RNA sequence: GGGAACGACUCGAGUAGAGUCGAAAACUGGCUCAAAUAUGCUGGGGGGUGUGGUGCUCCCCACGAAUUCACAGGCUCAUCGAUCGGAGACAGUGGGAACGGAGGCCACCAAGGAGAAUCUGCACACCGAGGGAGCGCGUCAAGCUCAGGACCAGACCACUGAUGUUAACUUCGGUUAACAUCAGUGAAAAGAAACAACAACAACAAC
Reactivity to DMS in 0.01 (KOAc 150mM, MgCl2 10mM, bicine 150mM(pH8.5), 24C), signal-to-noise 1, nucleotides 027 to 156: c050u000g050g050c080u000c040a110a120a060u020a060u010g020c070u010g020g000g040g060g080g040u010g000u000g030g200u000g000c010u000c010c000c000c040a020c050g020a060a020u010u010c130a140c060a050g030g000c010u000c010a120u010c040g050a060u010c060g000g000a060g020a020c080a090g020u000g010g060g030a010a150c060g000g010a140g060g000c030c020a060c060c060a050a060g020g010a090g030a090a060u000c030u010g000c050a100c110a100c040c030g000a090g020g010g030a030g010c020g000c060g080u010c010a060a100g010c020u040c070a100g000g000a060c010c070a100g020a120c070
Reactivity to 2A3 in 0.01 (KOAc 150mM, MgCl2 10mM, bicine 150mM(pH8.5), 24C), signal-to-noise 3, nucleotides 027 to 156: c020u030g030g000c020u010c080a100a140a050u180a110u230g100c130u040g000g000g000g000g000g000u040g030u050g060g180u130g020c010u010c000c000c000c000a010c000g000a020a070u100u080c010a020c020a110g060g000c010u020c040a100u080c060g060a090u080c020g040g010a010g040a020c050a030g030u010g030g010g010a060a050c060g030g020a010g010g040c000c020a020c060c050a060a020g040g010a010g020a060a060u080c020u140g000c070a030c020a020c040c030g020a030g010g040g000a010g010c030g000c000g050u050c050a000a010g010c020u020c030a020g010g050a020c060c000a020g020a030c000